[RMDB]
RNA sequence: GGGAACGACUCGAGUAGAGUCGAAAACGGAAACUUCGGUUUCCGAAAAAGAUAUGGACUGUCAUGUCGCUCGAGCAAUGACGUCGGAAACGAUAAGACAGCUCGAGAACUACGACAUUGACAGUCCUAAGUCAAAAAAGGCAACUUCGGUUGCCAAGAUAUAGGACAGUUUCGACUGUCCUAUAUCAAAAGAAACAACAACAACAAC
Reactivity to DMS in 0.01 (KOAc 150mM, MgCl2 10mM, bicine 150mM(pH8.5), 24C), signal-to-noise 2, nucleotides 027 to 156: c030g000g000a020a010a020c010u000u010c220g040g040u000u000u000c000c000g030a000a030a040a150a090g000a110u000a280u010g000g010a050c000u000g030u000c000a080u000g000u000c000g000c000u000c020g010a040g030c020a220a090u000g010a130c150g000u010c000g010g020a220a140a210c020g000a050u000a060a180g010a250c070a090g000c000u000c000g010a130g020a070a140c040u000a080c010g000a030c000a010u010u000g020a000c000a020g000u000c020c000u000a010a060g020u010c020a000a040a100a140a120a070g000g030c010a010a020c000u010u000c210g030g000u000u000g010c010c000a020a070
Reactivity to 2A3 in 0.01 (KOAc 150mM, MgCl2 10mM, bicine 150mM(pH8.5), 24C), signal-to-noise 8, nucleotides 027 to 156: c010g010g030a010a000a000c000u070u120c280g130g010u010u000u000c000c010g040a030a010a000a010a010g030a010u040a020u040g000g000a000c010u000g000u010c010a000u000g000u000c010g020c020u000c000g000a000g000c040a090a260u180g060a070c100g020u000c010g000g020a080a090a020c020g010a020u030a100a070g090a090c080a110g110c010u000c000g000a000g000a020a010c050u170a040c010g000a000c020a010u100u180g000a000c000a000g000u000c000c000u000a000a000g000u000c010a000a010a030a030a020a090g010g010c000a000a000c010u060u140c300g100g000u010u010g000c020c000a000a010